[RMDB]
RNA sequence: GGGAACGACUCGAGUAGAGUCGAAAAGGUGGCUCGACGCACCAGCGAAAAGAGAGGACUCACGAGUCACCGAUUUAGCAUGUUCGUCCUUUUGCCCGGGGCCCGAUUAUUUUGGACGUUCAUGCGAGGGAUGGUGAUCGUUCGCGAUUACCAUCCCAAAAGAAACAACAACAACAAC
Reactivity to DMS in 0.01 (KOAc 150mM, MgCl2 10mM, bicine 150mM(pH8.5), 24C), signal-to-noise 4, nucleotides 027 to 126: g000g020u000g010g000c000u020c000g000a300c070g000c020a130c300c200a190g010c060g000a110a060a100a090g000a040g000a190g020g020a140c000u010c050a300c020g010a010g020u000c010a000c000c000g000a020u040u020u010a160g000c000a020u000g010u000u020c030g000u010c000c000u000u000u040u010g000c040c020c000g040g000g020g010c010c000c060g040a100u000u030a080u010u020u050u020g000g040a030c040g010u000u000c000a000u000g000c040g010a130
Reactivity to 2A3 in 0.01 (KOAc 150mM, MgCl2 10mM, bicine 150mM(pH8.5), 24C), signal-to-noise 6, nucleotides 027 to 126: g010g000u010g010g000c000u020c010g080a110c050g050c020a080c050c010a030g060c040g130a130a040a160a020g120a000g020a050g070g100a170c040u030c000a050c000g000a000g000u010c000a000c000c000g000a000u010u020u110a010g000c010a000u010g000u000u000c000g000u000c000c010u080u070u140u180g060c030c010c030g020g010g010g010c000c010c000g060a070u110u030a140u060u300u120u100g010g000a000c000g000u020u000c000a000u000g000c000g010a080
Source: RMDB library OK1LIB, as collected in RNAgym. Structure probing data (DMS and 2A3) for a 177-nucleotide construct. The DMS profile rests on 5,916 reads. The reactions ran in a buffer of 150 mM KOAc, 10 mM MgCl2 and 150 mM bicine (pH 8.5), at 24 C.